[RMDB]
RNA sequence: GGGAACGACUCGAGUAGAGUCGAAAAACAUCGGACAGUGUUCUCACCUUUGAAUUGACGGAUAUUGUACAUUGUCGUAUGGCGGCGCCUAGUCAACGUAAAGCGGUUCUGUCGACCCUUGUCGGCACGUGCACAAUCAGUUCGCUGAUUGUGCACGAAAAGAAACAACAACAACAAC
Reactivity to 2A3 in 0.01 (KOAc 150mM, MgCl2 10mM, bicine 150mM(pH8.5), 24C), signal-to-noise 3, nucleotides 027 to 126: a000c010a050u110c050g070g050a020c030a030g010u020g050u090u010c050u020c010a050c000c040u110u110u170g140a200a100u090u090g050a060c090g050g020a050u050a090u170u140g030u030a020c020a090u020u070g040u060c020g040u060a040u150g070g000c040g020g010c030g080c000c040u050a050g040u040c010a080a020c080g060u050a100a030a040g110c050g070g020u070u090c040u060g010u010c000g030a060c040c030c030u060u180g050u010c000g000g000c050a040
Reactivity to DMS in 0.01 (KOAc 150mM, MgCl2 10mM, bicine 150mM(pH8.5), 24C), signal-to-noise 3, nucleotides 027 to 126: a070c050a070u000c050g020g000a040c030a060g010u000g000u000u000c040u000c090a130c070c040u000u000u010g010a120a120u010u000g030a080c190g010g010a050u010a080u010u000g010u000a030c090a080u000u000g010u000c070g010u010a050u010g010g010c050g020g020c060g000c000c000u000a080g010u000c030a050a050c120g010u010a030a080a090g000c090g020g000u010u000c050u020g020u010c030g000a050c010c200c140u000u000g020u000c030g000g000c050a060